[RMDB]
RNA sequence: GGGAACGACUCGAGUAGAGUCGAAAAUAAUAGUAGUUGAAAAUGAUUAUCAAUACCACAUAGAACAUCCCCCCACAACGUUUCGUUCUUGUUGGAUUGGUCAUUUUCAAAUAUUCCCCUUUUAUAUAUUCCCAUAAGGAUUCGUCCUUAUGGGAAUAAAAGAAACAACAACAACAAC
Reactivity to 2A3 in 0.01 (KOAc 150mM, MgCl2 10mM, bicine 150mM(pH8.5), 24C), signal-to-noise 8, nucleotides 027 to 126: u190a010a030u050a030g160u040a040g020u020u010g010a000a010a000a010u010g010a030u030u120a080u290c020a030a000u080a300c000c000a010c010a040u250a020g010a010a010c010a130u160c020c010c020c000c040c010a050c040a200a160c140g050u080u200u250c050g000u000u030c010u020u050g070u090u090g000g000a010u000u010g000g000u000c000a000u010u000u000u000c000a000a000a000u050a010u020u030c010c000c000c000u030u100u120u000a130u020a020u010
Reactivity to DMS in 0.01 (KOAc 150mM, MgCl2 10mM, bicine 150mM(pH8.5), 24C), signal-to-noise 4, nucleotides 027 to 126: u040a060a110u030a060g000u010a050g000u000u000g000a010a010a010a010u000g000a030u010u040a090u040c000a010a010u010a170c010c010a020c030a020u040a010g010a030a020c000a280u040c020c010c000c010c000c040a100c140a060a100c220g010u020u010u030c130g010u000u000c000u000u010g000u020u010g020g000a070u000u000g020g010u010c010a010u000u010u010u000c000a000a030a040u010a060u000u000c010c010c000c280u000u010u000u030a100u010a130u010